[RMDB]
RNA sequence: GGGAACGACUCGAGUAGAGUCGAAAAGUAAUGGCGAAUGGGACCCAGAGAUCUCUCUAGAUUCCGAUAGAGAAUCGAGAGAAAACUGGCUCUCCCUUAGCCAUCCGAGUGGACGUUCGUCCUCCUUACAGCUUGUUCUUCGGAACAAGCAAAAGAAACAACAACAACAAC
Reactivity to DMS in 0.01 (KOAc 150mM, MgCl2 10mM, bicine 150mM(pH8.5), 24C), signal-to-noise 6, nucleotides 027 to 129: g050u080a130a030u000g000g000c010g000a150a030u010g010g040g000a040c290c010c010a010g000a070g020a240u000c030u000c000u020c020u040a060g020a040u050u000c020c030g080a140u120a080g050a090g040a000a000u020c050g020a050g010a000g020a010a000a120a150c010u000g030g040c020u040c120u030c020c010c000u000u000a170g020c000c010a000u000c070c020g020a080g030u040g050g050a000c070g050u000u100c140g010u050c020c000u000c000c040u020u030a130c160a110
Reactivity to 2A3 in 0.01 (KOAc 150mM, MgCl2 10mM, bicine 150mM(pH8.5), 24C), signal-to-noise 8, nucleotides 027 to 129: g120u160a050a040u030g000g000c020g030a040a040u030g000g000g000a000c020c020c000a000g010a000g000a010u000c010u000c000u000c020u070a070g000a010u000u010c010c020g190a200u150a230g220a030g000a040a000u000c020g000a000g000a000g000a020a010a010a010c000u000g010g000c000u000c010u000c000c000c000u000u000a000g000c000c010a000u000c000c020g020a060g030u070g030g000a030c040g050u100u140c120g010u190c010c010u010c020c020u110u100a050c040a040